[RMDB]
RNA sequence: GGGAACGACUCGAGUAGAGUCGAAAAAUCACGUACUUAAAACAGGAAACGCUGUAUAUGGAAAAGUUCAACAUGAUUAUUCUACUAUCAAAGAGAAGGCCAAAGAAAUGAGUACACUUAGUCCAGGACCUAUCAUCGAUUACCACGUCUGGAUAGGCCUACGGCCUAGAUUCGUCUAGGCCGUAGGAAAAGAAACAACAACAACAAC
Reactivity to 2A3 in 0.01 (KOAc 150mM, MgCl2 10mM, bicine 150mM(pH8.5), 24C), signal-to-noise 2, nucleotides 027 to 156: a000u050c050a030c030g070u080a040c030u050u130a010a110a120a040c040a060g110g000a210a090a040c030g020c080u010g110u080a080u010a050u150g060g000a120a130a000a110g050u070u060c040a060a060c000a070u060g000a030u120u030a000u130u130c020u000a080c030u070a050u150c090a060a170a010g060a010g060a050a000g030g000c000c010a000a110a030g060a000a080a010u150g020a040g040u040a030c050a010c050u070u090a060g040u000c020c000a000g030g050a040c010c000u040a050u060c050a030u060c020g060a070u050u020a100c080c030a040c040g000u000c010u010g020g020a010u010a010g000g000
Reactivity to DMS in 0.01 (KOAc 150mM, MgCl2 10mM, bicine 150mM(pH8.5), 24C), signal-to-noise 1, nucleotides 027 to 156: a050u010c050a050c070g000u010a150c020u020u000a000a110a240a100c090a060g030g020a210a070a230c070g020c060u000g020u000a150u000a120u020g000g050a090a080a030a160g020u000u000c020a010a050c050a050u000g020a070u010u000a070u000u000c000u010a060c060u040a090u000c050a060a010a100g010a080g000a090a030g000g000c010c000a070a050a130g010a050a120a100u010g000a090g010u020a060c030a060c060u000u000a070g000u000c030c010a090g000g000a090c020c010u000a050u010c050a150u000c050g010a120u000u000a160c090c050a080c050g000u000c000u010g090g010a020u000a020g020g030
Description
An RNA of 207 nucleotides, treated with 2A3 and DMS and read out base by base. For DMS, 1,191 sequencing reads were counted. High 2A3 reactivity points to a flexible backbone, as in loops and unpaired stretches. For DMS the reverse transcriptase was MarathonRT.